[RMDB]
RNA sequence: GGGAACGACUCGAGUAGAGUCGAAAACCAUUUAACGAGCUACGUUUAACUACUUACCUUAAUAGUUAGAAAUAAGAUUCUUAGGUUAGUUUUGAUAGUUUAGCCCUGUUAUAUGGCGUUUUAUCAAAGCGAAUUUUAAGUAAUAUAACUAUGAUCGCCAUAUGAAACUGUUCGCAGUUUCAUAUGGAAAAGAAACAACAACAACAAC
Reactivity to DMS in 0.01 (KOAc 150mM, MgCl2 10mM, bicine 150mM(pH8.5), 24C), signal-to-noise 1, nucleotides 027 to 156: c000c020a110u010u000u000a080a080c030g010a130g010c030u010a060c070g030u000u010u000a050a150c020u010a060c000u010u000a240c070c050u000u010a040a060u010a010g020u010u010a050g010a130a080a150u000a090a170g000a260u000u000c020u000u000a010g010g020u000u000a040g000u000u000u000u000g010a040u010a000g010u000u000u000a120g010c020c000c080u020g000u020u010a100u000a090u010g020g000c040g000u000u000u000u010a010u000c020a010a000a050g010c010g010a030a020u030u000u030u000a010a080g010u000a140a090u000a100u000a050a020c000u010a020u000g000a120u000c080g000
Reactivity to 2A3 in 0.01 (KOAc 150mM, MgCl2 10mM, bicine 150mM(pH8.5), 24C), signal-to-noise 4, nucleotides 027 to 156: c000c000a030u120u140u090a080a030c050g020a040g110c090u170a020c030g030u010u040u060a060a010c020u050a010c020u090u130a040c020c020u090u110a050a080u030a110g060u070u060a020g050a050a150a090u150a060a060g030a180u200u020c030u100u030a000g020g000u010u020a000g020u020u010u000u020g010a010u010a040g040u080u080u140a010g030c000c000c010u020g020u060u020a050u010a010u040g000g000c000g000u000u040u090u030a000u010c000a000a010a010g020c020g030a040a050u080u170u220u180a050a000g000u010a010a040u020a010u000a020a020c010u020a060u150g040a050u050c040g000